[RMDB]
RNA sequence: GGGAACGACUCGAGUAGAGUCGAAAAAUAAAGGAGGUCAGGGUCAGGAGCCCCCCCCUGAACCCAGGAUAACCCUCAAAGUCGGGGCGCAACCCGCGACCGUUAGAGGACUGGUAAAAAUAAUGAAAUAGAAUGAAUAAUUCGUUAUUCAUUCUAUAAAAGAAACAACAACAACAAC
Reactivity to DMS in 0.01 (KOAc 150mM, MgCl2 10mM, bicine 150mM(pH8.5), 24C), signal-to-noise 1, nucleotides 027 to 126: a050u000a060a040a000g000g000a060g020g000u000c050a030g020g000g000u000c060a110g000g010a180g000c000c000c000c020c100c090c000c000u020g020a120a160c300c020c000a040g000g030a140u010a060a080c270c010c000u000c010a100a160a100g000u000c010g020g010g010g000c070g000c300a100a220c060c010c000g010c010g000a020c010c020g000u000u040a200g010a040g000g000a050c030u000g000g010u000a010a010a050a080a020u010a030a070u010g000a100a060